[RMDB]
RNA sequence: GGGAACGACUCGAGUAGAGUCGAAAAGAUAUGGAGAUGAGUUAAGCCGAAGAACUUCCUAUAUACGCGCUAUUCGGAAACGAAUAGCGCGUAUAUAGGAAGGGAGGCUCAACUAUCUCCUAAGUCACAGUAGCAUAUUGUUCGCAAUAUGCUACUGAAAAGAAACAACAACAACAAC
Reactivity to DMS in 0.01 (KOAc 150mM, MgCl2 10mM, bicine 150mM(pH8.5), 24C), signal-to-noise 2, nucleotides 027 to 126: g010a040u010a300u000g010g010a020g000a030u010g010a030g020u010u000a060a020g040c000c000g010a120a180g050a210a240c010u000u000c010c000u000a010u000a010u020a000c000g000c010g070c000u000a010u000u010c010g020g000a130a070a270c010g000a010a000u000a000g050c000g020c020g000u000a010u000a000u000a000g000g000a000a010g020g010g010a030g000g010c010u000c020a030a010c010u010a100u000c000u000c000c000u010a000a070g010u000c020a180
Chemical mapping of a 177-nucleotide RNA with DMS. Reactivities are given for positions 27 through 126. DMS adducts were read by reverse transcription with MarathonRT. For DMS, 2,175 sequencing reads were counted.